The record gives the reactivity of an RNA of 177 nucleotides to 2A3.
For 2A3 the reverse transcriptase was SuperScript II with manganese.
[RMDB]
RNA sequence: GGGAACGACUCGAGUAGAGUCGAAAAACGUGCUACGGCACGAUCGGUUUGUGACCGACACUAACGGGUAGUUAAAGGGCAUCCUCGCAUUCUGCUGGCUUACUCGUUUUUGCGAUCACAAAUUCAAUGAGGCCUAGAUGUUCGCAUCUAGGCCUCAAAAAGAAACAACAACAACAAC
Reactivity to 2A3 in 0.01 (KOAc 150mM, MgCl2 10mM, bicine 150mM(pH8.5), 24C), signal-to-noise 1, nucleotides 027 to 126: a010c000g000u000g000c000u110a250c300g080g000c020a030c030g010a080u130c000g090g000u000u000u000g000u000g000a000c000c000g050a140c000a060c010u000a000a000c030g000g000g000u000a000g000u000u140a300a070a000g100g030g000c010a050u130c030c120u000c070g020c080a060u080u020c070u020g070c020u000g000g030c010u070u060a010c030u030c060g010u000u000u000u030u000g000c000g000a000u000c000a000c000a000a000a000u100u210c000a000a080